[RMDB]
RNA sequence: GGGAACGACUCGAGUAGAGUCGAAAAGAAAGAAAGAAAGAAUGAUAAUGAUUCAAGAUCUUGGAGACUGACACACACACACACAUGUUUUCUUUUAAGCGAAAGUGCUUUUCUGUACAGUAGUAAAUAAUUUUAUUUCUUUCGAGAAAUAAAAUUAAAAAGAAACAACAACAACAAC
Reactivity to DMS in 0.01 (KOAc 150mM, MgCl2 10mM, bicine 150mM(pH8.5), 24C), signal-to-noise 3, nucleotides 027 to 126: g000a060a070a100g000a100a070a060g000a100a100a100g000a070a070u010g020a120u020a090a120u030g000a090u020u010c050a070a110g010a080u000c040u000u010g000g030a100g000a080c040u010g010a080c040a010c020a020c070a010c050a050c070a010c000a040c040a030u030g000u010u000u000u000c000u000u000u010u010a060a100g020c000g020a050a070a100g020u010g010c010u010u030u010u040c080u010g000u010a020c070a050g010u010a110g000u010a020a030a140
Reactivity to 2A3 in 0.01 (KOAc 150mM, MgCl2 10mM, bicine 150mM(pH8.5), 24C), signal-to-noise 4, nucleotides 027 to 126: g020a010a030a020g070a020a090a000g030a050a050a020g050a050a010u080g050a030u090a220a050u240g060a030u050u080c050a070a020g040a190u040c030u070u130g050g040a060g010a070c010u050g060a010c030a000c020a010c010a000c010a000c000a000c040a000c040a030u040g050u030u050u010u040c020u020u030u010u050a040a000g010c020g050a180a030a040g070u090g010c010u050u110u130u060c040u050g050u040a040c010a080g040u070a010g020u040a080a030a190
The record gives the reactivity of an RNA of 177 nucleotides to DMS and 2A3.
The 2A3 profile rests on 2,075 reads.
For DMS, 3,963 sequencing reads were counted.
Conditions: 150 mM KOAc, 10 mM MgCl2 and 150 mM bicine (pH 8.5), 24 C.
DMS adducts were read by reverse transcription with MarathonRT.
Values cover nucleotides 27 to 126.